RNA sequence: GGGAACGACUCGAGUAGAGUCGAAAAAUAGCUGAAGAGUAUUGCAAAGGUAUGGGUGUGAUUGGAAGUCAAAUGGAAGAGUGCAAGGAUAAGUAUAUUGAGACUCAUAGGCACGUAUUUCCUUGUGUACUCUAGACAUCUUCGGAUGUCUAGAGUAAAAAGAAACAACAACAACAAC
Reactivity to 2A3 in 0.01 (KOAc 150mM, MgCl2 10mM, bicine 150mM(pH8.5), 24C), signal-to-noise 5, nucleotides 027 to 126: a000u130a020g040c040u060g040a090a020g050a020g050u050a050u140u140g090c050a050a060a040g030g020u070a050u100g070g010g000u070g000u010g050a090u020u090g020g030a030a010g030u030c020a010a050a110u100g030g000a030a050g050a020g050u050g030c030a040a000g030g010a020u040a160a060g070u060a040u020a070u140u210g060a060g030a040c010u000c050a050u090a080g050g000c030a000c100g020u050a100u010u050u030c000c000u040u030g080u020g010
Reactivity to DMS in 0.01 (KOAc 150mM, MgCl2 10mM, bicine 150mM(pH8.5), 24C), signal-to-noise 6, nucleotides 027 to 126: a070u020a070g020c040u000g000a090a100g000a090g000u000a050u020u000g010c090a090a090a070g010g000u010a050u000g000g020g000u010g000u020g000a040u010u010g000g000a060a050g000u010c050a030a060a030u030g010g010a080a060g010a130g010u010g020c040a050a050g010g010a070u020a010a070g020u000a050u050a120u000u020g010a100g010a080c040u010c060a080u010a110g010g000c040a030c080g020u010a070u010u000u000c010c000u000u020g020u030g020